[RMDB]
RNA sequence: GGGAACGACUCGAGUAGAGUCGAAAAGGAUACUGUUACUUGCGCGCUGUCUGCGGACAGGGCAUGGACCGCACCGAGAGUCUCUGUUCCUACUCGUCGUCAUCGGAGGCUUGCCGAGCUAUGAACGGCUCCCUCCCGGAUCCUCGGGACUUCCGCGGUGUCAUUACUUUUUCGAAAGUAAUGACACAAAAGAAACAACAACAACAAC
Reactivity to DMS in 0.01 (KOAc 150mM, MgCl2 10mM, bicine 150mM(pH8.5), 24C), signal-to-noise 2, nucleotides 027 to 156: g000g020a070u010a060c050u000g000u010u000a070c050u000u010g020c010g040c050g000c010u010g000u000c020u020g010c140g010g010a080c060a040g000g000g000c050a080u000g020g010a080c010c040g000c080a190c010c000g000a180g010a110g000u000c000u000c060u000g000u010u000c040c020u010a070c070u000c040g030u000c030g050u010c030a100u000c050g010g000a070g020g000c040u000u000g000c000c010g010a140g020c070u010a100u000g010a100a120c050g020g010c030u010c040c010c010u000c020c000c040g020g000a100u000c030c020u000c030g010g000g010a080c100u000u000c010c010g040c130g030
Reactivity to 2A3 in 0.01 (KOAc 150mM, MgCl2 10mM, bicine 150mM(pH8.5), 24C), signal-to-noise 4, nucleotides 027 to 156: g060g010a080u070a170c050u080g050u120u060a080c040u050u080g030c060g020c030g010c070u010g000u010c010u020g040c110g120g010a010c000a020g030g020g000c000a030u080g030g000a030c020c040g000c060a040c040c040g080a050g000a000g080u010c010u010c030u140g050u070u060c010c010u010a040c030u020c040g070u010c020g030u010c030a090u070c070g020g010a020g010g000c080u040u080g000c020c020g040a040g010c060u180a090u290g090a110a030c010g010g000c000u020c000c000c000u020c000c010c020g030g000a060u050c010c030u020c010g020g010g020a050c040u060u020c020c020g030c060g090
Structure probing data (DMS and 2A3) for a 207-nucleotide construct.
As a SHAPE reagent, 2A3 marks flexible, mostly unpaired nucleotides at the ribose 2'-OH.
Conditions: 150 mM KOAc, 10 mM MgCl2 and 150 mM bicine (pH 8.5), 24 C.
For 2A3 the reverse transcriptase was SuperScript II with manganese.